RNA sequence: GGGAACGACUCGAGUAGAGUCGAAAAGAUAUGGACCCACAGUUCUUUUGACGCAUCUCGGAAACGAGUAUGCGAUAAGAACGUGGGUCCUAAGUCAAACAAUAUGCUCCUUCGGGAGCAUAUUGAAGAUUAGAUACCCGUUCGCGGGUAUCUAAUCAAAAGAAACAACAACAACAAC
Reactivity to DMS in 0.01 (KOAc 150mM, MgCl2 10mM, bicine 150mM(pH8.5), 24C), signal-to-noise 3, nucleotides 027 to 126: g010a010u000a150u000g010g000a020c000c000c010a000c000a120g020u000u010c000u000u000u010u010g020a300c020g000c010a000u000c000u010c020g000g000a040a060a090c000g010a010g000u000a010u000g000c010g000a040u000a010a010g010a010a010c010g010u000g010g010g000u010c000c000u000a000a080g000u000c010a150a110a300c020a010a010u000a000u000g000c000u000c000c010u010u000c160g030g010g000a010g000c010a000u000a000u000u000g010a110a080
Reactivity to 2A3 in 0.01 (KOAc 150mM, MgCl2 10mM, bicine 150mM(pH8.5), 24C), signal-to-noise 1, nucleotides 027 to 126: g010a000u050a020u060g010g000a000c020c010c000a010c000a060g000u010u030c010u070u200u190u190g090a070c010g020c000a000u000c010u000c010g020g020a050a030a000c010g010a000g040u260a010u010g000c000g000a010u070a060a030g000a010a000c000g020u000g000g030g000u000c000c000u000a000a000g000u010c030a000a000a060c010a010a000u000a000u000g000c000u020c000c000u030u050c160g080g000g010a040g000c000a000u000a000u000u000g000a020a000